RNA sequence: GGGAACGACUCGAGUAGAGUCGAAAAGGAAUAGGUUCGCCUAUUCCAAAAAGCGUACUACCUUCGCUCGAUGAGCAUGUGAACUACAAAGUCCCAAAUAGGACUUUGCACAUGCGAGAGCAAAGGUAUCGCAAAAAUCUGAACUUCGGUUCAGAAAGAAAAAGUCCAUAUUCGUAUGGACUUUUUCAAAAGAAACAACAACAACAAC
Reactivity to DMS in 0.01 (KOAc 150mM, MgCl2 10mM, bicine 150mM(pH8.5), 24C), signal-to-noise 2, nucleotides 027 to 156: g000g000a020a000u020a010g010g040u000u000c300g040c020c010u000a000u020u000c020c010a050a020a070a090a150g030c000g020u000a110c150u010a010c000c010u000u000c030g030c000u000c010g000a210u010g040a230g000c030a010u000g010u000g020a130a280c020u000a200c000a000a030a010g020u010c000c010c020a040a080a220u010a060g010g010a010c000u000u000u000g000c010a040c020a000u020g000c010g000a150g000a030g050c020a020a000a010g010g010u000a010u000c020g060c000a030a060a110a080a110u020c020u010g000a010a030c030u000u000c280g030g000u000u000c000a020g010a060a130a170
Reactivity to 2A3 in 0.01 (KOAc 150mM, MgCl2 10mM, bicine 150mM(pH8.5), 24C), signal-to-noise 2, nucleotides 027 to 156: g000g010a000a000u000a000g030g000u050u050c190g230c040c050u060a060u000u030c000c050a000a000a060a000a000g060c040g000u030a040c040u040a010c030c010u010u020c060g010c000u000c000g250a290u280g130a090g070c010a000u000g000u000g020a090a100c040u070a050c300a000a000a000g000u000c040c030c000a140a160a120u300a100g000g000a000c000u000u010u000g000c000a000c010a000u010g000c000g030a040g000a000g000c000a000a000a010g000g010u000a010u050c000g020c000a020a000a000a090a090u010c010u000g000a000a000c020u040u030c170g050g020u010u000c010a000g000a040a080a130
The record gives the reactivity of an RNA of 207 nucleotides to DMS and 2A3. Conditions: 150 mM KOAc, 10 mM MgCl2 and 150 mM bicine (pH 8.5), 24 C. For 2A3, 1,431 sequencing reads were counted. Source: RMDB library RNAMAK, as collected in RNAgym. Values cover nucleotides 27 to 156. For DMS, 3,370 sequencing reads were counted.